[RMDB]
The record gives the reactivity of an RNA of 207 nucleotides to 2A3 and DMS.
The reactions ran in a buffer of 150 mM KOAc, 10 mM MgCl2 and 150 mM bicine (pH 8.5), at 24 C.
RNA sequence: GGGAACGACUCGAGUAGAGUCGAAAAGGGCCUUGCUCUGGUUUAGGCUUUGGCUUAAUGGAAUGUUGGGGCUGGUUUGAUCAUCUGACCAGAUCACUCAAACUUUCUCCAUAUCAGCAAUAAAGCUUGUAUUAGUCUGUUUUUAGCCACUGAUGAAAUCGGUAAACAAUUUCGAUUGUUUACCGAUAAAAGAAACAACAACAACAAC
Reactivity to 2A3 in 0.01 (KOAc 150mM, MgCl2 10mM, bicine 150mM(pH8.5), 24C), signal-to-noise 4, nucleotides 027 to 156: g050g010g010c030c030u060u110g020c040u010c030u050g110g000u060u080u140a050g000g000c000u030u010u040g030g000c010u020u050a020a010u020g000g020a080a020u050g010u000u020g010g000g000g000c020u010g020g030u040u010u030g080a160u130c060a060u030c060u040g010a010c010c010a000g010a100u120c050a100c060u010c000a020a110a160c010u070u110u080c060u000c020c010a010u060a150u070c030a010g000c020a030a120u080a170a080a000g000c000u060u050g080u050a150u060u040a030g020u010c050u050g140u050u050u030u020u070a030g030c060c050a070c090u100g050a060u100g080a160a160
Reactivity to DMS in 0.01 (KOAc 150mM, MgCl2 10mM, bicine 150mM(pH8.5), 24C), signal-to-noise 3, nucleotides 027 to 156: g000g010g000c020c020u000u010g020c010u010c020u000g020g010u000u000u000a060g010g040c010u000u000u000g030g010c000u010u000a100a060u000g010g010a060a080u010g030u010u000g010g010g030g000c130u010g040g020u010u010u010g010a020u000c030a300u000c190u000g010a030c030c030a020g000a030u000c010a060c020u000c020a020a020a030c020u000u000u010c100u000c020c000a090u000a150u000c100a080g020c030a070a100u000a040a070a090g000c020u010u010g020u000a080u000u010a050g010u000c040u000g020u010u000u010u000u000a120g020c050c050a150c050u010g000a100u010g020a080a150
Background: 2A3 is a SHAPE reagent: it acylates the 2'-hydroxyl of flexible nucleotides of all four kinds.